Structure probing data (2A3 and DMS) for a 177-nucleotide construct. The data come from the RNA Mapping Database (RMDB), library M2PK50. For 2A3 the reverse transcriptase was SuperScript II with manganese. The RNA was probed in 150 mM KOAc, 10 mM MgCl2 and 150 mM bicine (pH 8.5) at 24 C.
RNA sequence: GGGAACGACUCGAGUAGAGUCGAAAACCCGUUCAUUUCGAUGAACGGGAGUGGGUAACCCUAGGACCAGUAGUGGGACCCGUAGUGGCCGUGGGAGCAGUAAAGAGUUAACAUUCGUGUUAACUAACUUUUGUUUUCGUUUCGACGAAAACAAAAGAAAAGAAACAACAACAACAAC
Reactivity to 2A3 in 0.01 (KOAc 150mM, MgCl2 10mM, bicine 150mM(pH8.5), 24C), signal-to-noise 1, nucleotides 027 to 126: c010c000c010g000u000u010c010a020u000u060u120c200g150a000u000g000a000a000c010g020g010g030a010g050u100g020g030g010u040a120a150c000c020c050u020a090g010g040a150c000c060a060g110u100a010g040u200g010g040g020a030c000c010c030g000u070a040g080u090g030g000c050c040g000u050g030g000g020a060g000c050a000g040u120a050a140a000g230a040g010u010u010a000a000c010a020u050u010c150g050u000g020u030u000a000a000c010u000a000a100
Reactivity to DMS in 0.01 (KOAc 150mM, MgCl2 10mM, bicine 150mM(pH8.5), 24C), signal-to-noise 2, nucleotides 027 to 126: c000c000c000g000u000u000c000a000u000u000u020c190g000a020u000g010a020a010c000g000g000g010a020g000u010g000g000g000u010a080a100c020c010c020u000a090g030g010a160c040c050a070g020u010a100g020u010g000g010g010a070c040c010c020g010u000a040g010u010g010g030c030c010g010u000g000g010g000a050g010c070a120g000u000a070a070a090g010a040g000u000u000a000a010c000a070u010u000c220g000u000g010u000u000a010a010c010u000a040a080